[RMDB]
RNA sequence: GGGAACGACUCGAGUAGAGUCGAAAAUAAGAUUGAUGCUGACGAGUAUGCAUUUGUUGGUUUUACGUGGAAUCGUCAGCACAUUUUACAGGCCAUUCAGGCUGAUGUUAUACCUGAGAGCAUUUCUGGUUCAUGAUUAAAAGAAGCAAGAGGACCACUAGUCCAACUCAUUCGUGAGUUGGACUAGAAAAGAAACAACAACAACAAC
Reactivity to 2A3 in 0.01 (KOAc 150mM, MgCl2 10mM, bicine 150mM(pH8.5), 24C), signal-to-noise 2, nucleotides 027 to 156: u070a010a010g020a020u020u150g060a040u030g080c000u010g000a000c020g000a000g080u200a090u240g020c080a110u090u070u170g100u000u040g020g100u100u090u080u070a070c050g010u090g010g070a130a070u020c000g010u000c000a000g000c000a000c030a010u000u000u000u040a060c050a030g010g060c030c010a040u120u130c050a060g030g000c000u010g030a050u050g020u110u050a090u020a080c000c050u040g010a050g000a020g060c050a050u080u100u000c000u020g030g030u010u080c070a120u210g100a040u070u170a020a050a020a090g130a060a030g120c100a000a050g060a020g070g050a020c060c020a010
Reactivity to DMS in 0.01 (KOAc 150mM, MgCl2 10mM, bicine 150mM(pH8.5), 24C), signal-to-noise 1, nucleotides 027 to 156: u010a040a040g000a100u000u020g050a030u000g020c000u000g030a060c000g020a040g010u000a120u000g000c040a210u000u000u010g010u000u000g020g040u000u000u000u000a070c110g100u000g000g010a090a150u000c040g010u010c020a020g050c000a010c120a000u000u010u000u000a040c030a130g090g020c000c000a150u010u000c070a100g040g020c020u030g020a040u000g010u000u000a120u020a040c030c000u030g020a100g010a090g000c110a140u010u000u000c140u000g050g020u000u000c000a050u000g020a180u000u000a030a070a080a110g010a040a090g020c070a030a130g000a130g000g020a050c020c020a230